An RNA of 207 nucleotides, treated with 2A3 and DMS and read out base by base.
RNA sequence: GGGAACGACUCGAGUAGAGUCGAAAAGAUGCUUUUAAAAUGACCAUGGGUUAGUAUGGAAAAUAGUAAUUUUUGCACGUUAAAAGUAUGCAUUGUAAAAGAUUGUCUGAUGUGGAUGAUGAGUAGUGCCACUUCCAAUUUUAUGUGGCCGUGAUGAAUCGUAUAUGCUCUUCGGAGCAUAUACGAUAAAAGAAACAACAACAACAAC
Reactivity to 2A3 in 0.01 (KOAc 150mM, MgCl2 10mM, bicine 150mM(pH8.5), 24C), signal-to-noise 2, nucleotides 027 to 156: g010a010u050g030c090u000u030u000u180a060a210a040a000u120g050a080c000c050a060u050g020g100g000u090u070a060g060u080a120u110g050g040a000a000a070a140u070a040g100u070a060a130u020u030u050u120u130g000c060a060c060g000u010u120a090a060a000a010g070u070a020u120g020c040a030u080u210g030u190a040a010a030a020g060a100u060u080g010u000c040u050g060a070u050g010u040g060g030a020u040g000a030u140g010a040g010u140a020g020u040g070c000c000a000c000u130u030c070c020a120a140u030u070u070u190a030u160g000u000g000g000c000c010g060u000g040a040u080g050a090
Reactivity to DMS in 0.01 (KOAc 150mM, MgCl2 10mM, bicine 150mM(pH8.5), 24C), signal-to-noise 2, nucleotides 027 to 156: g010a090u010g010c010u000u000u010u030a020a030a100a100u010g040a130c120c010a090u010g020g020g030u000u010a070g020u000a070u000g000g000a070a050a120a090u000a050g010u040a050a120u000u000u010u000u000g010c010a100c080g000u000u000a050a050a090a160g010u000a020u020g000c070a060u000u010g030u000a070a090a100a130g000a040u000u000g050u000c020u000g010a070u000g020u000g020g020a100u000g010a050u000g010a110g050u000a120g020u000g010c000c010a050c030u000u030c110c120a050a160u000u020u000u010a070u000g010u000g010g010c000c010g030u000g010a110u000g010a080
Record summary
DMS adducts were read by reverse transcription with MarathonRT. Values are in units of 0.01, from 0 to 300, in steps of 10. Values cover nucleotides 27 to 156. For 2A3, 801 sequencing reads were counted.